RNA sequence: GGGAACGACUCGAGUAGAGUCGAAAAGAGAAAGAGGAAACCACAAAAACACAUGUGCAUCAUGUUACCUCAACCAGAUGUGCACUUGAACGUGUAGUCAGCAUAGGCACCCGUACCCAACCAGAUGUGCACUUGGACGCCUAAGCAGUAGAUGGUACUAUCACCCAGCGUUCGCGCUGGGUGAUAGAAAAGAAACAACAACAACAAC
Reactivity to 2A3 in 0.01 (KOAc 150mM, MgCl2 10mM, bicine 150mM(pH8.5), 24C), signal-to-noise 1, nucleotides 027 to 156: g100a040g020a010a090a010g090a010g000g080a090a060a000c060c040a020c020a000a110a000a140a000c030a000c000a020u040g020u120g050c030a050u160c020a040u100g060u090u100a130c020c000u070c030a050a050c040c000a030g010a120u100g060u040g020c000a020c090u060u120g130a160a000c050g030u010g010u080a100g000u070c080a020g000c050a110u090a100g000g040c000a000c000c010c010g070u070a080c020c030c010a000a030c040c010a050g010a120u080g040u020g030c030a000c050u010u010g000g000a010c030g060c020c040u060a080a080g030c100a010g000u090a030g030a030u120g010g100u070a040